[RMDB]
Annotation: Structure probing data (DMS and 2A3) for a 177-nucleotide construct. The reactions ran in a buffer of 150 mM KOAc, 10 mM MgCl2 and 150 mM bicine (pH 8.5), at 24 C. For 2A3 the reverse transcriptase was SuperScript II with manganese.
RNA sequence: GGGAACGACUCGAGUAGAGUCGAAAAGUCCGGCGCAUCUCGCCGAACUCGGAGAUCAGCUUGCCGUCCUCGCUGUAGACCUUGAGGGGGAUCUGCAGCUGGACGUUACGCAGAGCUUCCACCGAGGCGGAUGUAAGUACUUCGGUACUUACAUCCGAAAAGAAACAACAACAACAAC
Reactivity to DMS in 0.01 (KOAc 150mM, MgCl2 10mM, bicine 150mM(pH8.5), 24C), signal-to-noise 3, nucleotides 027 to 126: g020u000c050c000g000g030c000g020c300a150u030c120u020c030g020c010c030g000a060a060c010u010c050g000g000a220g000a050u030c080a020g000c020u000u000g000c060c000g010u010c000c000u010c290g020c000u000g010u000a000g000a010c010c000u000u040g020a160g020g000g000g020g030a090u010c000u000g010c000a000g010c010u000g010g000a020c000g010u030u040a030c200g030c000a070g040a020g000c030u010u030c040c050a100c040c020g020a030g020g000
Reactivity to 2A3 in 0.01 (KOAc 150mM, MgCl2 10mM, bicine 150mM(pH8.5), 24C), signal-to-noise 8, nucleotides 027 to 126: g050u040c050c000g010g000c010g020c040a150u080c090u060c090g010c010c000g020a040a040c000u000c010g010g010a020g010a070u150c080a010g000c000u020u020g000c000c000g000u000c000c000u040c100g000c000u010g000u010a000g010a030c000c000u050u080g110a290g080g120g020g000g060a210u000c000u010g000c010a000g000c000u000g000g000a000c000g000u040u080a040c050g000c020a010g020a010g190c000u040u000c010c020a130c020c010g010a010g010g020